[RMDB]
RNA sequence: GGGAACGACUCGAGUAGAGUCGAAAAUUAAAAAGGUGUGGUGGCCUAUUGAGCACAUUACACACAGGCAGCUUUGUAAGCGAGUUUGUGAAAUAAUCACUCAGAUGUCUUACACAUAAGGAAUUAGCGCUUUACUUCUUUUCGAAGAAGUAAAGCGAAAAGAAACAACAACAACAAC
Reactivity to DMS in 0.01 (KOAc 150mM, MgCl2 10mM, bicine 150mM(pH8.5), 24C), signal-to-noise 3, nucleotides 027 to 126: u020u000a020a070a060a140a110g010g040u010g010u000g000g000u010g010g000c030c080u010a070u000u010g010a050g010c030a110c140a090u000u010a020c180a250c020a030c030a010g010g010c010a180g000c010u000u000u010g010u000a070a030g000c020g000a140g010u000u010u000g000u000g000a060a080a240u000a090a020u000c120a130c020u000c000a040g020a100u000g000u000c010u010u000a150c030a020c080a020u020a080a090g010g020a110a080u000u000a090g010
Reactivity to 2A3 in 0.01 (KOAc 150mM, MgCl2 10mM, bicine 150mM(pH8.5), 24C), signal-to-noise 2, nucleotides 027 to 126: u060u040a000a040a100a080a020g060g010u020g010u000g030g050u070g010g010c000c030u100a220u090u100g010a010g020c020a050c000a120u000u000a020c030a000c000a000c000a010g000g040c010a000g030c010u010u100u270g170u280a020a010g020c020g000a140g040u060u020u010g000u000g040a070a040a000u080a020a010u110c020a030c040u010c000a020g020a110u050g010u000c010u030u090a040c040a000c010a040u100a070a060g030g130a110a130u120u030a100g040

Chemical mapping of a 177-nucleotide RNA with DMS and 2A3. 2A3 adducts were read by reverse transcription with SuperScript II with manganese. As a SHAPE reagent, 2A3 marks flexible, mostly unpaired nucleotides at the ribose 2'-OH.